[RMDB]
RNA sequence: GGGAACGACUCGAGUAGAGUCGAAAACGCGUCAGAUUCGUCUGACGCGAAACCAUAGAACAGCGCUAUCAUGUAUUAUAGUUCUAUGCAACUAUAGCGCUAAAACGAUACCGUUCGCGGUAUCGAACGUUUUCAUUGGAUUCGUCCAAUGAAAACGAAAAGAAACAACAACAACAAC
Reactivity to DMS in 0.01 (KOAc 150mM, MgCl2 10mM, bicine 150mM(pH8.5), 24C), signal-to-noise 3, nucleotides 027 to 126: c000g020c000g010u000c010a010g010a040u000u020c230g020u000c000u000g010a020c000g010c010g000a010a040a150c010c010a160u020a100g010a140a120c140a010g030c000g020c000u000a050u010c250a110u010g010u000a080u010u000a080u000a060g010u020u010c080u010a070u000g000c070a040a050c100u000a010u000a010g010c000g030c010u000a040a040a070a120c020g010a000u000a000c010c010g040u000u000c130g010c010g000g010u000a000u000c000g000a050a120
Reactivity to 2A3 in 0.01 (KOAc 150mM, MgCl2 10mM, bicine 150mM(pH8.5), 24C), signal-to-noise 5, nucleotides 027 to 126: c000g010c000g000u000c000a000g010a030u040u080c120g070u000c090u000g000a000c000g000c000g000a000a000a000c010c000a070u090a100g170a090a060c060a040g000c000g020c020u030a020u080c040a100u130g140u130a110u180u110a100u110a070g100u100u020c080u110a140u130g030c030a010a030c020u020a000u000a030g010c010g000c000u010a010a010a000a030c020g000a000u000a000c010c000g030u020u060c260g000c000g090g010u000a000u000c000g000a060a020

About this RNA
This 177-nucleotide RNA was probed chemically with DMS and 2A3. Reactivities are given for positions 27 through 126. For DMS the reverse transcriptase was MarathonRT. The RNA was probed in 150 mM KOAc, 10 mM MgCl2 and 150 mM bicine (pH 8.5) at 24 C. The 2A3 profile rests on 9,741 reads. Source: RMDB library M2PK50, as collected in RNAgym.